[RMDB]
RNA sequence: GGGAACGACUCGAGUAGAGUCGAAAAAGGAACUAUGUUGACAAAUUUCAAAAAAGAAUCUGAGGGAGACUAUGGAGUGCUAUGACACCAGGAAAACUUAAAACUUUGUGUAAGAUAGACUGGCCAGCCUUCUCCUAAAUUUCGAUUUAGGAGAAGGAAAAGAAACAACAACAACAAC
Reactivity to DMS in 0.01 (KOAc 150mM, MgCl2 10mM, bicine 150mM(pH8.5), 24C), signal-to-noise 3, nucleotides 027 to 126: a080g020g000a100a070c050u010a050u020g000u000u000g020a080c060a060a090a150u010u010u020c070a000a060a080a060a110a120g000a100a040u010c060u000g020a070g000g010g010a080g010a070c050u000a050u000g010g010a070g010u000g010c040u000a060u000g000a080c040a070c040c020a050g010g000a040a040a070a080c080u000u000a030a030a070a090c100u000u000u000g020u010g000u000a040a020g000a120u010a040g000a100c030u000g010g000c060c060a090g000
Reactivity to 2A3 in 0.01 (KOAc 150mM, MgCl2 10mM, bicine 150mM(pH8.5), 24C), signal-to-noise 2, nucleotides 027 to 126: a020g050g000a060a010c040u080a040u120g040u030u030g060a020c020a000a190a130u110u150u120c070a140a120a110a010a000a110g040a020a060u000c020u090g010a100g000g030g030a040g010a020c010u030a060u100g030g040a040g010u030g060c030u070a050u130g060a040c000a000c010c020a010g000g090a030a050a100a080c050u080u070a160a110a080a060c040u060u050u170g060u000g020u020a020a010g010a060u020a040g050a060c050u060g060g000c000c000a050g020
This 177-nucleotide RNA was probed chemically with DMS and 2A3. DMS adducts were read by reverse transcription with MarathonRT. The 2A3 profile rests on 1,377 reads. It was measured as part of the RMDB library OK2TRN.